RNA sequence: GGGAACGACUCGAGUAGAGUCGAAAAUGGAAUGGAACGAGCGUGCUAUCAGGACUUAUCAGCGUGCCGGAUUUGUUAUUACGGAUACCUAUGAACGAAUGACAAUGGCAGGACCGGCUAUUGUGCACGUCGUCGAGUAUUUCGAUACUCGACGACGAAAAGAAACAACAACAACAAC
Reactivity to DMS in 0.01 (KOAc 150mM, MgCl2 10mM, bicine 150mM(pH8.5), 24C), signal-to-noise 1, nucleotides 027 to 126: u000g000g040a130a120u030g000g000a070a050c110g000a190g070c020g050u000g090c010u000a190u020c100a010g020g010a060c090u010u030a120u020c030a100g000c120g060u000g040c050c000g050g000a070u000u020u060g000u000u000a020u000u000a050c130g000g020a130u000a060c000c020u000a070u050g030a090a050c070g000a130a120u000g000a000c030a020a000u000g010g050c030a100g010g000a090c120c020g000g030c070u000a070u000u000g000u000g000c010a300
Reactivity to 2A3 in 0.01 (KOAc 150mM, MgCl2 10mM, bicine 150mM(pH8.5), 24C), signal-to-noise 2, nucleotides 027 to 126: u090g040g030a090a030u110g010g000a150a000c020g030a020g050c010g000u020g000c000u020a020u200c000a020g030g010a040c070u040u110a090u130c050a020g040c040g140u130g000c010c000g000g000a040u040u000u010g000u000u010a020u040u000a100c080g000g010a040u120a170c050c080u080a070u210g060a070a040c060g040a080a020u050g000a010c000a060a000u040g040g000c030a060g040g140a020c000c000g000g020c000u000a020u020u150g020u040g000c040a000

Background:
The record gives the reactivity of an RNA of 177 nucleotides to DMS and 2A3. 2A3 adducts were read by reverse transcription with SuperScript II with manganese. For 2A3, 827 sequencing reads were counted.